[RMDB]
RNA sequence: GGGAACGACUCGAGUAGAGUCGAAAAUCAAUGCUUCAGACAGUGUUAGACUGUCUAUUAGAUCAUUAUUUAAAUAUUGCUCAACCAUGAUGAUUGAGAUGGGAAGACCCAUUGGUGGUGAUAUAUUUGGUAGCAAGUAUAAGCCUGCAAACCAAGACAAUGCUUCUACUUUCGAGUAGAAGCAUUGAAAAGAAACAACAACAACAAC
Reactivity to DMS in 0.01 (KOAc 150mM, MgCl2 10mM, bicine 150mM(pH8.5), 24C), signal-to-noise 3, nucleotides 027 to 156: u000c070a060a080u010g020c080u000u020c080a060g010a020c000a020g030u010g030u000u000a130g020a060c000u000g030u000c000u000a050u010u000a110g000a130u000c030a090u000u000a130u020u000u000a080a070a110u000a120u000u000g000c010u000c020a030a020c020c020a200u020g040a140u020g070a030u000u000g010a020g010a070u000g000g020g020a130a120g000a150c020c000c010a300u000u000g010g030u000g010g000u000g010a070u000a040u010a090u000u010u000g000g030u010a300g020c000a030a000g010u000a100u000a090a230g020c020c000u000g020c020a040a100a150c020c000a010a030g010a180
Reactivity to 2A3 in 0.01 (KOAc 150mM, MgCl2 10mM, bicine 150mM(pH8.5), 24C), signal-to-noise 3, nucleotides 027 to 156: u050c020a000a050u050g030c050u070u060c030a000g010a000c000a000g000u010g070u250u170a120g090a090c010u000g020u000c000u000a020u020u110a010g010a010u080c010a010u010u150a070u120u230u140a060a140a070u180a070u080u120g020c010u020c060a030a020c040c020a020u100g030a040u050g030a050u120u150g030a070g010a060u060g020g000g020a060a110g100a140c000c060c000a020u020u060g010g030u050g000g020u030g040a010u030a010u010a060u120u040u020g040g000u030a020g060c010a010a000g000u020a090u030a220a020g100c010c000u020g020c050a070a040a070c030c000a020a000g010a020
The record gives the reactivity of an RNA of 207 nucleotides to DMS and 2A3. For DMS the reverse transcriptase was MarathonRT. The RNA was probed in 150 mM KOAc, 10 mM MgCl2 and 150 mM bicine (pH 8.5) at 24 C. It was measured as part of the RMDB library OK3TST.